[RMDB]
RNA sequence: GGGAACGACUCGAGUAGAGUCGAAAACGUGCUGAUGACGAAGGCUUCAUCACAUUAAAGAACAAUCUAUAUAGAUUGGUUUGGCAUGUUGAGCGUAAAGACGUUCCAUAUCCUAAGCAAUCUAUUUCAUAUAUUUAUGGUUCGCCAUAAAUAUAUGAAAAGAAACAACAACAACAAC
Reactivity to DMS in 0.01 (KOAc 150mM, MgCl2 10mM, bicine 150mM(pH8.5), 24C), signal-to-noise 3, nucleotides 027 to 126: c160g030u000g010c150u010g020a010u000g010a040c080g030a180a160g030g030c140u010u000c000a020u000c010a040c020a060u000u000a070a100a110g010a190a140c080a080a060u040c050u000a100u000a110u010a010g000a000u000u000g000g000u000u000u000g000g000c300a020u000g000u000u010g010a030g000c010g010u010a130a080a130g000a100c020g020u010u010c000c050a030u000a070u000c020c010u000a050a050g000c020a020a020u010c010u000a020u000u000u000
Reactivity to 2A3 in 0.01 (KOAc 150mM, MgCl2 10mM, bicine 150mM(pH8.5), 24C), signal-to-noise 8, nucleotides 027 to 126: c030g000u010g010c070u020g010a010u010g010a020c040g140a270a090g150g020c000u040u010c000a010u010c000a010c010a030u140u190a130a110a060g050a060a040c030a040a040u010c030u090a140u020a030u030a300g010a010u000u030g060g100u120u010u020g010g000c050a000u010g010u010u040g010a000g000c010g010u050a140a230a080g220a100c000g010u000u010c000c000a000u020a020u010c010c010u020a020a000g010c000a010a010u010c000u020a070u010u010u010
Structure probing data (DMS and 2A3) for a 177-nucleotide construct.
DMS adducts were read by reverse transcription with MarathonRT.
Values cover nucleotides 27 to 126.
2A3 adducts were read by reverse transcription with SuperScript II with manganese.
The reactions ran in a buffer of 150 mM KOAc, 10 mM MgCl2 and 150 mM bicine (pH 8.5), at 24 C.